[RMDB]
RNA sequence: GGGAACGACUCGAGUAGAGUCGAAAAGAUAUGGAGCGACUGAUAAGACAGUCGCUGGUCGGAAACGACCAGACGACAAUGACGUCAGGUCGCUCCUAAGUCAAAUCGCGGAGUUCGCUCCGCGAAAGUUUGUAAGAUAGUUCGCUAUCUUACAAACAAAAGAAACAACAACAACAAC
Reactivity to 2A3 in 0.01 (KOAc 150mM, MgCl2 10mM, bicine 150mM(pH8.5), 24C), signal-to-noise 7, nucleotides 027 to 126: g020a000u010a010u050g000g000a010g000c010g020a000c010u050g100a290u190a300a210g060a070c140a130g010u000c000g000c000u000g010g000u000c000g000g010a010a000a010c010g000a000c000c010a000g050a060c010g000a000c020a080a270u300g140a150c300g000u010c020a010g060g040u010c000g000c000u000c000c000u000a000a000g000u000c010a000a010a110u070c010g000c010g010g000a000g020u100u110c220g100c150u000c010c000g000c000g000a000a000a000
Reactivity to DMS in 0.01 (KOAc 150mM, MgCl2 10mM, bicine 150mM(pH8.5), 24C), signal-to-noise 6, nucleotides 027 to 126: g010a020u000a060u010g000g000a000g010c000g010a020c000u010g010a150u020a180a170g010a070c080a170g020u000c000g020c010u000g010g000u000c000g010g010a020a020a040c010g000a010c000c010a000g010a130c010g020a010c010a220a200u010g010a110c300g020u000c010a130g010g010u010c010g000c000u000c000c000u000a000a050g010u000c010a080a120a150u010c010g020c000g000g000a010g030u000u020c300g010c010u000c010c000g030c010g000a010a020a080
The record gives the reactivity of an RNA of 177 nucleotides to 2A3 and DMS. For 2A3 the reverse transcriptase was SuperScript II with manganese. It was measured as part of the RMDB library TTRDES. Values cover nucleotides 27 to 126. Conditions: 150 mM KOAc, 10 mM MgCl2 and 150 mM bicine (pH 8.5), 24 C.